[RMDB]
RNA sequence: GGGAACGACUCGAGUAGAGUCGAAAAGUCGAGUGAUGAUCUUCCUGAUAGGGACAUCUGAUGCAAAAAGCACAUGAUGCGAACAGGACAAGAGAUUUUAGUAGAUGCUUCUUGGAUAUCUGAAGAAUUGUUCAAUUACUUUCGAGUAAUUGAACAAAAAAGAAACAACAACAACAAC
Reactivity to 2A3 in 0.01 (KOAc 150mM, MgCl2 10mM, bicine 150mM(pH8.5), 24C), signal-to-noise 8, nucleotides 027 to 126: g060u020c020g010a040g060u070g020a050u020g010a020u010c010u050u020c010c000u030g050a120u160a150g140g020g060a060c010a010u000c010u040g080a270u010g010c050a050a070a110a140a030g010c000a010c010a050u190g000a010u020g000c010g010a070a020c010a010g010g040a020c060a100a050g010a000g000a030u000u020u040u070a080g010u030a020g010a040u050g050c020u020u040c000u010u040g080g010a080u070a100u140c040u080g050a060a010g030a150a160
Reactivity to DMS in 0.01 (KOAc 150mM, MgCl2 10mM, bicine 150mM(pH8.5), 24C), signal-to-noise 9, nucleotides 027 to 126: g020u010c040g000a150g000u010g000a040u010g000a150u000c020u000u000c010c010u000g000a110u030a110g010g010g010a170c030a010u000c000u010g010a150u000g010c010a070a080a080a140a130g000c020a030c050a030u020g010a030u000g000c030g010a130a120c020a030g000g000a090c210a070a030g010a050g000a150u000u000u000u010a070g010u010a070g000a030u000g010c070u010u000c020u000u000g000g000a090u010a040u010c050u010g010a070a090g010a070a140